[RMDB]
RNA sequence: GGGAACGACUCGAGUAGAGUCGAAAAACAUAUUCAUCUUGGUUCUUGAGCGCGAGGCGUUCUGCACGUGCACAGGCUUUGCUCAGCGUUGGUGCACAGCGCGUUUGGGCGGCAGGACCGGUAACACAGGAGCCAUACCGUUCGCGGUAUGGCUCCUAAAAGAAACAACAACAACAAC
Reactivity to 2A3 in 0.01 (KOAc 150mM, MgCl2 10mM, bicine 150mM(pH8.5), 24C), signal-to-noise 1, nucleotides 027 to 126: a010c110a000u160a140u220u100c150a270u040c030u140u250g000g000u140u040c000u010u050g000a090g020c000g000c000g010a010g020g000c000g010u080u100c080u150g000c000a020c180g020u090g000c000a000c100a270g010g010c000u030u080u260g040c190u180c100a000g000c040g070u070u000g050g000u030g010c060a000c000a000g050c010g000c000g120u050u010u050g060g020g040c020g000g000c000a000g000g000a000c000c000g000g020u020a000a000c060a000c060